An RNA of 177 nucleotides, treated with DMS and 2A3 and read out base by base. For 2A3 the reverse transcriptase was SuperScript II with manganese. Reactivities are rounded to 0.1 and cut off at 0 and 3. Source: RMDB library TTRDES, as collected in RNAgym.
RNA sequence: GGGAACGACUCGAGUAGAGUCGAAAAGAUAUGGAAUCGUGGGAGCAACAGCCCACGGUGGUCGGAAACGACCAUUGGGACAUGCUCCGCACGAUUCCUAAGUCAAAGACUGCCUUCGGGCAGUCAAGCUGAUUGUAACGUUCGCGUUACAAUCAGCAAAAGAAACAACAACAACAAC
Reactivity to DMS in 0.01 (KOAc 150mM, MgCl2 10mM, bicine 150mM(pH8.5), 24C), signal-to-noise 3, nucleotides 027 to 126: g010a050u010a250u020g010g000a000a000u000c000g050u000g050g000g020a020g000c000a030a040c270a180g030c000c000c000a060c300g000g010u000g010g000u000c010g020g020a100a040a180c010g010a010c010c000a000u000u000g020g020g010a020c050a300u020g010c000u000c010c000g000c020a010c010g000a020u000u000c000c010u010a010a080g000u010c020a100a090a190g010a030c000u000g010c000c020u000u030c290g030g010g010c000a010g000u000c000a020a060
Reactivity to 2A3 in 0.01 (KOAc 150mM, MgCl2 10mM, bicine 150mM(pH8.5), 24C), signal-to-noise 2, nucleotides 027 to 126: g010a000u050a050u110g010g000a000a020u020c010g010u030g010g010g000a020g060c080a100a150c090a230g020c050c000c000a020c060g010g000u010g020g000u000c000g010g010a050a040a030c020g000a010c000c030a040u020u010g020g030g000a000c140a240u300g000c010u010c010c000g000c000a000c000g000a000u000u030c000c000u010a020a000g000u000c010a070a140a070g000a010c010u000g000c000c000u040u100c240g060g030g000c000a000g000u000c000a010a010